Chemical mapping of a 207-nucleotide RNA with 2A3 and DMS.
For 2A3 the reverse transcriptase was SuperScript II with manganese.
The RNA was probed in 150 mM KOAc, 10 mM MgCl2 and 150 mM bicine (pH 8.5) at 24 C.
The data come from the RNA Mapping Database (RMDB), library ARCHII.
The 2A3 profile rests on 622 reads.
[RMDB]
RNA sequence: GGGAACGACUCGAGUAGAGUCGAAAAACUAGAUGGGGGUCGGUUCUUUCCGGAUGGGAAGGGUUUAAGGUAUAGUCCGUUACAAACUGCAGUACAUUUUAGAUGUACGUCUGCUUGGUCUGCUUAUAGCUUUAUCUCACUGAGAUAAAGGUAAAGGGAAUAAACUGGUGUUCGCACCAGUUUAUUCAAAAGAAACAACAACAACAAC
Reactivity to 2A3 in 0.01 (KOAc 150mM, MgCl2 10mM, bicine 150mM(pH8.5), 24C), signal-to-noise 1, nucleotides 027 to 156: a000c060u080a080g020a170u180g000g000g000g000g000u030c000g000g040u100u030c020u000u000u090c020c020g010g070a090u030g020g080g020a010a040g000g020g010u080u110u170a080a030g000g000u060a040u000a120g070u020c040c030g030u040u040a090c040a100a130a020c020u030g000c000a010g010u010a010c000a030u000u030u110u160a060g020a060u010g010u040a010c030g050u040c040u050g020c000u020u010g040g030u020c000u000g020c030u180u050a120u010a180g010c000u000u010u000a020u000c000u000c060a300c300u120g000a000g000a020u000a000a020a000g050g000u070a070a070a030g060g020
Reactivity to DMS in 0.01 (KOAc 150mM, MgCl2 10mM, bicine 150mM(pH8.5), 24C), signal-to-noise 1, nucleotides 027 to 156: a120c040u000a080g030a110u000g020g010g030g010g010u010c020g040g020u010u000c050u000u010u010c040c030g030g020a170u000g030g010g010a080a060g000g000g020u000u000u000a050a080g010g020u000a080u010a100g010u000c010c040g010u020u010a220c060a030a060a100c050u000g010c040a100g010u010a020c020a030u010u020u000u000a130g040a070u000g040u000a010c040g010u010c070u010g010c050u000u000g000g020u000c090u000g000c000u000u000a150u000a160g010c000u010u010u000a000u000c010u020c010a260c180u000g030a070g000a010u000a000a010a000g000g030u000a010a060a140g010g000